[RMDB]
Overview: Chemical mapping of a 177-nucleotide RNA with 2A3 and DMS.
RNA sequence: GGGAACGACUCGAGUAGAGUCGAAAACGGGGUACGAGGGAUUGCUAAAGAACUAAGGUUUAGCAGUUAAAUACCCAUAGACGACCUUAGAUAGAAGGAUAGUUCUUCUUCUGUCCCUCGUUGUCUAGGUACUGGUAGAUUUCGAUCUAUCAGUACCAAAAGAAACAACAACAACAAC
Reactivity to 2A3 in 0.01 (KOAc 150mM, MgCl2 10mM, bicine 150mM(pH8.5), 24C), signal-to-noise 9, nucleotides 027 to 126: c040g010g020g010g050u060a010c010g010a020g010g020g010a020u010u050g030c050u130a120a070a050g080a100a050c030u030a040a040g080g030u020u020u060a030g020c030a010g010u030u060a060a080a040u190a100c010c000c010a020u070a020g050a020c030g010a020c000c000u020u010a020g010a050u090a040g050a050a010g040g040a060u120a160g150u170u060c010u020u000c000u010u000c000u020g010u000c000c000c000u010c010g000u000u030g020u000c010u020a050
Reactivity to DMS in 0.01 (KOAc 150mM, MgCl2 10mM, bicine 150mM(pH8.5), 24C), signal-to-noise 8, nucleotides 027 to 126: c150g010g000g000g010u000a000c020g000a040g000g010g010a030u000u010g020c070u000a040a050a050g000a050a080c060u020a040a060g010g000u000u010u010a040g000c080a070g010u010u020a060a110a110u040a080c030c040c010a170u020a050g000a060c140g000a040c000c030u000u010a110g000a080u010a030g010a020a010g000g010a150u020a100g010u020u020c060u000u000c010u000u000c010u000g000u000c000c010c020u010c090g000u000u000g000u000c010u000a100
The reactions ran in a buffer of 150 mM KOAc, 10 mM MgCl2 and 150 mM bicine (pH 8.5), at 24 C. High 2A3 reactivity points to a flexible backbone, as in loops and unpaired stretches. For 2A3 the reverse transcriptase was SuperScript II with manganese. Values cover nucleotides 27 to 126.